[RMDB]
RNA sequence: GGGAACGACUCGAGUAGAGUCGAAAAACUGCGACGUGAUACGUCACGUCGCAGAACGCCUUUGUCUAACACCCCGCACCGCGAGCACUAUUUCCCGGCGGGGUGAUUUCAGAGGGCGGAGAUUCAAGCAAUAUAUCCGUUUCGACGGAUAUAUUGCAAAAGAAACAACAACAACAAC
Reactivity to DMS in 0.01 (KOAc 150mM, MgCl2 10mM, bicine 150mM(pH8.5), 24C), signal-to-noise 2, nucleotides 027 to 126: a110c010u020g010c000g000a010c000g100u000g020a060u000a070c250g000u000c000a020c000g010u000c000g000c000a000g000a040a100c010g010c000c000u000u010u000g020u020c060u030a050a070c020a000c000c000c000c000g000c020a140c160c130g000c240g000a030g030c120a130c120u000a160u090u000u000c000c020c000g020g000c000g020g000g000g020u010g000a010u000u050u010c070a090g020a000g000g010g030c000g040g000a150g000a170u000u000c030a180a260
Reactivity to 2A3 in 0.01 (KOAc 150mM, MgCl2 10mM, bicine 150mM(pH8.5), 24C), signal-to-noise 3, nucleotides 027 to 126: a000c010u020g000c000g000a000c000g000u000g040a000u030a060c240g090u010c010a000c010g000u000c000g000c000a000g000a010a000c000g000c000c010u080u030u040g100u070c030u010a100a000c000a000c020c010c000c000g000c030a100c050c060g060c050g030a020g020c090a040c190u140a160u090u120u120c020c030c000g000g000c000g030g020g000g000u000g000a000u000u000u000c020a010g020a030g050g060g080c030g040g030a080g010a030u170u120c080a080a030